The data come from the RNA Mapping Database (RMDB), libraries RFM100 and RFMREP. Structure probing data (DMS and 2A3) for a 177-nucleotide construct. For 2A3 the reverse transcriptase was SuperScript II with manganese.
RNA sequence: GGGAACGACUCGAGUAGAGUCGAAAACCAGGCCCUUAGCAGGAUACCCACUUAAUGAGGGUCACCACAAGAGAAUGAUAAAAUAUUCAACGGGGGACUUUUCAUAUGGAACGAUAAAGUUGCAGCGCCAUAUUGUACCCUUCGGGGUACAAUAUGGAAAAGAAACAACAACAACAAC
Reactivity to DMS in 0.01 (KOAc 150mM, MgCl2 10mM, bicine 150mM(pH8.5), 24C), signal-to-noise 2, nucleotides 027 to 126: c020c000a110g020g000c040c000c030u000u000a050g020c130a030g000g000a120u030a060c060c010c020a110c080u000u000a090a100u000g000a010g010g000g000u010c030a070c060c040a070c100a070a090g000a270g000a030a010u010g050a110u030a050a070a150a090u020a020u020u020c010a050a190c260g020g020g000g000g000a020c050u000u000u000u000c010a010u010a050u000g000g000a040a080c090g000a080u000a050a010a080g010u000u010g000c040a110g000c140g000
Reactivity to 2A3 in 0.01 (KOAc 150mM, MgCl2 10mM, bicine 150mM(pH8.5), 24C), signal-to-noise 4, nucleotides 027 to 126: c000c000a010g030g000c000c000c000u060u070a010g040c040a020g060g050a040u140a130c000c020c010a070c080u080u130a050a040u090g000a030g000g000g010u000c030a050c070c020a070c060a110a060g070a010g010a120a040u120g050a040u210a130a120a060a020u180a060u050u050c020a060a070c040g010g000g000g000g000a020c010u030u150u050u020c030a010u110a060u220g080g040a080a010c070g080a110u120a150a150a020g030u030u050g020c070a040g020c030g010